[RMDB]
RNA sequence: GGGAACGACUCGAGUAGAGUCGAAAAGUGUCUCUGAGGCCACCAACACCCGAGAUGCCAUGGCAAAGUGCAUAUACAACUCUUUGUUUCACUAUAUAGUCCUCAGGAUUAAUCAGGCAUUGCUGAAUCAUUAUCACGCUUUCGAGCGUGAUAAUGAAAAAGAAACAACAACAACAAC
Reactivity to DMS in 0.01 (KOAc 150mM, MgCl2 10mM, bicine 150mM(pH8.5), 24C), signal-to-noise 3, nucleotides 027 to 126: g020u020g000u010c060u010c020u000g000a030g010g020c190c040a030c040c050a040a130c170a090c020c020c000g000a130g000a020u010g000c060c060a180u000g000g010c030a020a030a020g010u010g010c120a060u000a110u020a050c190a070a110c050u000c030u000u000u010g000u000u000u020c070a070c120u010a060u010a140u010a090g010u000c010c000u000c040a070g000g010a130u000u000a080a060u000c080a070g000g000c040a030u000u000g010c050u000g000a100a190
Reactivity to 2A3 in 0.01 (KOAc 150mM, MgCl2 10mM, bicine 150mM(pH8.5), 24C), signal-to-noise 2, nucleotides 027 to 126: g050u030g020u030c020u000c050u130g030a040g000g000c020c020a030c010c030a050a050c040a090c050c010c000g040a050g010a040u050g090c010c040a040u030g030g000c000a000a060a040g020u050g070c120a040u140a030u040a160c100a120a030c030u000c020u000u010u000g030u000u090u100c030a010c060u010a030u060a030u040a300g070u000c000c020u000c000a010g000g000a010u070u200a110a050u080c030a000g050g000c050a070u030u100g050c050u080g060a040a040

Source information
The data come from the RNA Mapping Database (RMDB), library OK2TRN. This 177-nucleotide RNA was probed chemically with DMS and 2A3. For 2A3 the reverse transcriptase was SuperScript II with manganese.